[RMDB]
RNA sequence: GGGAACGACUCGAGUAGAGUCGAAAAACUCGGACCGGCUCAUCUCGACAAGAGGCGGCAGUCCUCAGUGCUCUUACUCUUUUCUGUAAAGAGGAGACUGCUGGACUCGUCGCCCGAGUUCGAGCAUGAGCCAAGAGCCGGGCGAGGAGAACGCGGGGAGCACAAUGAAGUUCGCUUCAUUGUGCUCAAAAGAAACAACAACAACAAC
Reactivity to 2A3 in 0.01 (KOAc 150mM, MgCl2 10mM, bicine 150mM(pH8.5), 24C), signal-to-noise 2, nucleotides 027 to 156: a000c020u020c000g010g020a020c000c080g010g000c000u000c000a020u020c000u000c000g020a010c010a050a110g150a190g040g000c000g000g070c000a000g000u000c010c010u010c000a120g010u200g180c010u000c010u100u300a300c000u020c000u070u090u130u100c180u300g300u300a010a030a010g010a010g020g000a010g030a000c000u010g080c040u010g000g000a000c000u060c080g010u040c000g000c000c000c000g050a070g050u080u030c020g000a000g060c050a010u010g010a020g000c000c000a000a000g010a000g020c010c010g000g000g020c050g020a060g030g060a060g070a120a000c040g030c090g030g040g050
Chemical mapping of a 207-nucleotide RNA with 2A3. For 2A3, 661 sequencing reads were counted. Conditions: 150 mM KOAc, 10 mM MgCl2 and 150 mM bicine (pH 8.5), 24 C.